[RMDB]
RNA sequence: GGGAACGACUCGAGUAGAGUCGAAAACAAAGCCAGAUUCUCGUACUGGCAAGCAACGGAUAAAACUUGAGGAAAACGAGAAAUCCACAGGAAAAAGCAGAAAAACUGCAAUCCGAAAACAAACAAACCCAUACGACCAUUUCGAUGGUCGUAUGGGAAAAGAAACAACAACAACAAC
Reactivity to 2A3 in 0.01 (KOAc 150mM, MgCl2 10mM, bicine 150mM(pH8.5), 24C), signal-to-noise 2, nucleotides 027 to 126: c040a040a140a000g010c000c000a000g010a050u040u150c020u020c040g000u010a050c000u010g000g000c010a010a000g050c030a070a140c080g000g010a020u070a200a140a050a050c090u010u020g010a050g000g070a000a000a000a000c030g000a000g020a110a080a020u020c050c000a010c020a080g000g080a000a260a020a010a000g000c020a000g090a110a000a160a000a000c020u000g010c020a000a020u000c030c000g000a070a130a000a000c080a060a090a000c020a000a030a020